[RMDB]
RNA sequence: GGGAACGACUCGAGUAGAGUCGAAAAAGAUAUAGUGUACCUUAGUAGACCCACUUUUGAGGAAAGAGAGGGCUAUUUACGUGUUAGCAGAUUUGGAAGACGUGGAACUAUCCAAACUAGAAGUGGGCGUUCCAACGGGAUUCGUCCCGUUGGAACGAAAAGAAACAACAACAACAAC
Reactivity to DMS in 0.01 (KOAc 150mM, MgCl2 10mM, bicine 150mM(pH8.5), 24C), signal-to-noise 1, nucleotides 027 to 126: a100g010a090u000a040u000a060g020u000g050u000a130c030c030u020u020a080g020u010a080g010a230c000c000c000a050c020u000u000u000u000g000a090g030g020a070a090a060g000a070g000a110g010g000g000c010u000a060u000u000u020a050c190g030u010g020u010u010a080g040c070a070g000a130u000u000u020g030g000a080a020g000a090c100g000u000g000g020a070a040c050u010a090u000c010c040a020a060a110c080u000a100g000a010a040g010u000g000g000g020
Reactivity to 2A3 in 0.01 (KOAc 150mM, MgCl2 10mM, bicine 150mM(pH8.5), 24C), signal-to-noise 1, nucleotides 027 to 126: a020g160a010u180a030u110a210g100u110g040u170a140c000c040u060u070a040g070u010a030g120a290c000c000c000a030c020u100u030u020u150g300a080g000g070a110a050a000g000a000g040a010g020g010g000c000u050a060u010u000u000a060c060g020u060g050u090u040a030g050c020a000g050a300u040u070u140g040g000a050a010g040a010c050g030u110g010g040a110a000c000u000a030u060c050c020a080a000a020c030u010a030g000a030a020g000u000g030g000g000